[RMDB]
RNA sequence: GGGAACGACUCGAGUAGAGUCGAAAAUGCGAUGGGCACGCUGCGUGGAGACUGUGAGGUCUCCAAAAUCAUUGUCCUCGACGACCUGACCGCAACCACGUUGGCCGCAGGAUUGCGCGGCGCUCAGAAAUAGCUACGUCUUCGGACGUAGCUAUUUAAAAGAAACAACAACAACAAC
Reactivity to DMS in 0.01 (KOAc 150mM, MgCl2 10mM, bicine 150mM(pH8.5), 24C), signal-to-noise 2, nucleotides 027 to 126: u030g010c100g010a050u000g010g000g050c050a050c090g000c010u010g000c200g040u010g010g010a000g000a000c000u000g010u100g000a130g020g000u000c000u000c010c000a000a030a030a060u030c070a090u040u040g000u000c000c020u010c030g020a050c030g000a050c010c030u000g000a100c030c000g010c050a080a150c070c060a050c160g020u000u010g010g030c010c070g000c050a090g010g030a140u000u050g000c100g000c010g000g000c030g000c050u030c050a130g030
Reactivity to 2A3 in 0.01 (KOAc 150mM, MgCl2 10mM, bicine 150mM(pH8.5), 24C), signal-to-noise 3, nucleotides 027 to 126: u280g000c110g040a030u070g000g000g000c040a030c080g050c050u030g040c030g110u010g000g000a010g010a000c000u000g040u100g130a110g060g000u000c000u030c010c000a000a000a000a000u020c030a070u060u110g000u000c020c000u010c030g080a090c060g020a050c050c010u010g030a090c060c020g040c020a030a000c010c040a060c080g030u080u110g050g000c010c000g010c010a010g000g100a180u060u210g020c060g040c020g080g030c010g000c000u040c000a050g080